[RMDB]
The record gives the reactivity of an RNA of 177 nucleotides to DMS and 2A3. Reactivities are given for positions 27 through 126. Conditions: 150 mM KOAc, 10 mM MgCl2 and 150 mM bicine (pH 8.5), 24 C.

RNA sequence: GGGAACGACUCGAGUAGAGUCGAAAACGUCGUACUUUCAAUGUUAGCUUCUUCUAAGGGAUAUGAGACAACGACGAAAGUUUAGUGUUCCUUGUAUGCGAGGAGGCUGAACAUCUGGCAAUCGCAAGGGUAAUUCUAACUUCGGUUAGAAUUACCCAAAAGAAACAACAACAACAAC
Reactivity to DMS in 0.01 (KOAc 150mM, MgCl2 10mM, bicine 150mM(pH8.5), 24C), signal-to-noise 2, nucleotides 027 to 126: c200g040u000c010g000u010a070c060u000u000u000c070a100a010u000g030u000u000a040g050c010u010u000c000u000u030c000u000a060a000g000g020g020a030u020a030u000g000a100g000a070c040a090a150c120g000a190c220g010a150a090a120g040u000u000u000a220g010u020g000u000u030c000c000u000u030g030u020a040u050g010c300g000a020g000g000a030g000g030c000u010g000a000a020c030a020u000c140u010g000g030c070a050a080u010c030g000c020a080a100
Reactivity to 2A3 in 0.01 (KOAc 150mM, MgCl2 10mM, bicine 150mM(pH8.5), 24C), signal-to-noise 4, nucleotides 027 to 126: c040g120u110c030g050u140a100c100u090u110u030c050a050a030u080g000u020u000a020g000c000u040u020c000u050u020c020u040a010a040g030g030g010a010u010a000u130g120a110g040a020c050a080a080c070g300a020c140g030a150a060a020g000u000u010u040a000g000u010g030u060u000c000c000u010u030g160u090a180u240g120c040g000a000g000g000a010g000g030c010u020g010a040a000c010a050u020c010u060g100g000c050a020a160u120c090g050c150a160a160